[RMDB]
RNA sequence: GGGAACGACUCGAGUAGAGUCGAAAACUUUUUUUUUUUCUUCUAUUGAUAUCAUAUCGUCUCGUUCGUUAUUAAAUGUAAUUCUUCCACCGUACUAGUUAUCGAAGGCAAGAUCUCCUUUUUACGCUCAAUAGUGCAUAUUCGUAUGCACUAUUGAAAAAGAAACAACAACAACAAC
Reactivity to 2A3 in 0.01 (KOAc 150mM, MgCl2 10mM, bicine 150mM(pH8.5), 24C), signal-to-noise 3, nucleotides 027 to 126: c000u220u210u050u100u000u020u030u020u000u050u020c020u080u010c020u010a140u090u090g040a070u060a030u230c050a020u050a020u150c040g030u000c010u000c050g060u100u020c010g050u070u060a090u070u110a110a100a070u130g040u100a040a090u110u000c020u090u050c000c040a050c030c000g050u040a040c030u060a060g120u130u020a080u080c020g010a050a000g010g010c020a010a010g010a080u010c000u000c030c020u020u080u110u130u100a050c090g010c010
Reactivity to DMS in 0.01 (KOAc 150mM, MgCl2 10mM, bicine 150mM(pH8.5), 24C), signal-to-noise 3, nucleotides 027 to 126: c020u050u000u000u000u000u000u000u010u010u000u010c010u000u000c020u000a100u000u000g000a120u000a070u010c060a080u000a070u000c030g020u000c030u000c020g010u000u000c020g000u000u000a080u000u000a040a060a050u010g020u010a040a050u000u000c050u000u010c030c020a070c080c050g000u000a040c070u000a090g010u000u010a040u000c080g000a080a090g000g020c070a060a060g000a050u000c030u010c010c020u000u000u010u000u010a080c190g010c220